Structure probing data (2A3 and DMS) for a 177-nucleotide construct.
The reactions ran in a buffer of 150 mM KOAc, 10 mM MgCl2 and 150 mM bicine (pH 8.5), at 24 C.
For 2A3, 827 sequencing reads were counted.
For DMS the reverse transcriptase was MarathonRT.
[RMDB]
RNA sequence: GGGAACGACUCGAGUAGAGUCGAAAAGGAACGUCAGCCACCAUUACAUCCGGUGAGCAGUCAGGUGCGGUGAUACGUGGUGUUUUUGAUGACCCUGAAAAUAUCAGCUAUGCCGGACAGGGCGUGCCCGGUAGCUCUCAUUCGUGAGAGCUACCGGAAAAGAAACAACAACAACAAC
Reactivity to 2A3 in 0.01 (KOAc 150mM, MgCl2 10mM, bicine 150mM(pH8.5), 24C), signal-to-noise 1, nucleotides 027 to 126: g010g000a060a050c010g040u040c020a000g020c030c000a000c000c040a050u090u220a080c030a090u060c000c020g010g000u030g060a100g030c040a050g030u030c100a000g000g130u080g050c080g030g060u040g100a010u020a060c140g040u100g070g040u030g050u060u140u010u050u060g130a150u080g100a080c010c010c000u080g000a120a020a020a060u100a020u070c010a010g030c060u110a000u110g000c010c020g010g060a020c030a040g060g070g000c040g030u020g000c000
Reactivity to DMS in 0.01 (KOAc 150mM, MgCl2 10mM, bicine 150mM(pH8.5), 24C), signal-to-noise 1, nucleotides 027 to 126: g010g000a150a070c060g020u000c070a140g010c060c000a050c020c000a070u010u000a080c190a080u000c140c080g020g000u010g000a080g050c060a090g010u000c030a060g000g030u010g020c080g020g000u010g030a090u020a030c230g060u000g030g000u020g000u000u000u000u000u000g000a090u000g000a080c060c020c000u000g000a030a050a060a070u000a020u000c030a040g000c040u000a060u020g010c010c010g000g000a060c090a110g000g000g000c070g020u000g010c100